[RMDB]
RNA sequence: GGGAACGACUCGAGUAGAGUCGAAAACCGAAGAGGAAAGGAAGGACACAGACGCGAACCGUGAGUGGAACCCUCGAUCCUUUAUUGGGGGGUACACUCGAGGAGUGGAAGGCGGGGAGGAGGGGGCAAGGUGAUACCUUCGGGUAUCACAAAAGAAACAACAACAACAAC
Reactivity to DMS in 0.01 (KOAc 150mM, MgCl2 10mM, bicine 150mM(pH8.5), 24C), signal-to-noise 1, nucleotides 027 to 129: c030c040g020a030a030g030a060g020g010a050a070a080g020g020a080a000g040g030a080c080a080c120a060g050a100c040g030c040g030a080a120c060c030g010u050g000a040g000u030g040g000a180a150c050c020c010u020c030g030a040u000c180c070u020u050u000a000u070u000g020g000g020g000g030g000u000a130c100a040c040u020c050g020a110g020g010a050g030u030g000g000a090a050g000g000c130g000g000g000g000a100g020g000a100g000g000g000g000g000c040a090a040g000
Reactivity to 2A3 in 0.01 (KOAc 150mM, MgCl2 10mM, bicine 150mM(pH8.5), 24C), signal-to-noise 8, nucleotides 027 to 129: c000c010g010a030a010g020a010g020g010a050a010a010g000g030a010a020g040g000a010c030a000c010a090g110a050c040g040c040g060a060a030c020c020g050u070g050a010g000u040g000g050a090a050c010c000c000u010c010g040a050u110c030c090u190u240u180a140u130u090g010g000g000g000g030g010u080a020c010a010c030u040c010g010a050g000g020a020g020u140g010g040a060a020g030g020c080g020g010g000g020a080g030g020a060g000g000g000g000g000c020a030a030g100
Chemical mapping of a 170-nucleotide RNA with DMS and 2A3. DMS adducts were read by reverse transcription with MarathonRT.